The record gives the reactivity of an RNA of 177 nucleotides to 2A3 and DMS.
For 2A3, 3,431 sequencing reads were counted.
The DMS profile rests on 4,430 reads.
Source: RMDB library OK1LIB, as collected in RNAgym.
[RMDB]
RNA sequence: GGGAACGACUCGAGUAGAGUCGAAAAGUGUUUUGUCGCAGUAUCUUGAGUGCGUCACACAGGCUUGUGGCAGAACAAUAAAGAUGUAGCCUUGCGGCUUGAGAAAUUUGACCAUGCGAUGGCACAAAUAUCCCUGGUCAUUCGUGACCAGGGAUAUAAAAGAAACAACAACAACAAC
Reactivity to 2A3 in 0.01 (KOAc 150mM, MgCl2 10mM, bicine 150mM(pH8.5), 24C), signal-to-noise 5, nucleotides 027 to 126: g020u030g040u050u050u160u140g010u020c000g000c010a040g020u060a040u040c000u020u060g020a040g010u080g110c090g060u080c030a020c010a010c050a060g100g050c120u080u090g020u030g050g000c040a010g090a200a010c020a020a050u170a040a170a020g060a040u110g060u180a010g000c000c000u020u100g050c070g000g010c000u020u040g020a050g090a060a140a100u210u210u210g080a080c040c030a060u060g000c010g020a020u020g000g000c020a010c000a040a140
Reactivity to DMS in 0.01 (KOAc 150mM, MgCl2 10mM, bicine 150mM(pH8.5), 24C), signal-to-noise 3, nucleotides 027 to 126: g030u000g010u000u000u000u030g040u000c010g040c000a000g050u030a010u000c040u010u010g000a160g030u010g000c260g000u000c050a010c040a100c120a170g000g010c170u030u030g040u000g000g000c030a020g010a100a040c000a020a070u040a140a070a040g000a010u000g020u010a070g000c050c030u020u060g010c210g000g000c010u000u000g000a050g030a030a040a130u010u070u020g000a090c150c060a110u010g010c010g010a070u000g000g030c060a020c060a070a110